[RMDB]
RNA sequence: GGGAACGACUCGAGUAGAGUCGAAAAGAUAUGGAGGCCCGAACGCAGAUAACACCGUAACAUCUUUCGGAAACGAAAGUGGGUGUUGUAGUUCUCUCCUAAGUCAAAACCGUGCUUCGGCACGGAACCAGUACAAAUCGUUCGCGAUUUGUACUGGAAAAGAAACAACAACAACAAC
Reactivity to DMS in 0.01 (KOAc 150mM, MgCl2 10mM, bicine 150mM(pH8.5), 24C), signal-to-noise 3, nucleotides 027 to 126: g000a050u010a300u000g000g010a010g010g000c150c140c210g000a000a020c010g040c180a130g010a090u000a020a010c000a010c000c000g020u000a070a100c140a020u010c010u000u000u000c000g000g000a090a070a120c010g000a010a000a010g030u000g010g010g050u010g010u000u000g010u010a060g010u000u000c010u010c020u000c000c000u010a080a140g000u010c010a100a040a080a120c010c000g000u000g010c000u000u000c240g030g010c010a010c010g000g000a060a060
Reactivity to 2A3 in 0.01 (KOAc 150mM, MgCl2 10mM, bicine 150mM(pH8.5), 24C), signal-to-noise 3, nucleotides 027 to 126: g020a010u040a020u150g020g010a020g030g040c110c150c000g000a010a000c030g000c200a050g010a300u170a090a000c010a000c000c030g070u080a090a050c040a290u130c000u010u030u020c020g040g000a120a050a060c020g000a030a020a010g010u030g000g040g000u000g010u010u000g000u050a080g000u020u000c030u020c000u050c010c000u040a290a030g020u060c020a000a030a060a190c000c010g000u000g000c010u110u120c300g120g000c000a000c000g000g000a010a020
Conditions: 150 mM KOAc, 10 mM MgCl2 and 150 mM bicine (pH 8.5), 24 C. Structure probing data (DMS and 2A3) for a 177-nucleotide construct. 2A3 adducts were read by reverse transcription with SuperScript II with manganese. It was measured as part of the RMDB library TTRDEL. For DMS, 2,042 sequencing reads were counted.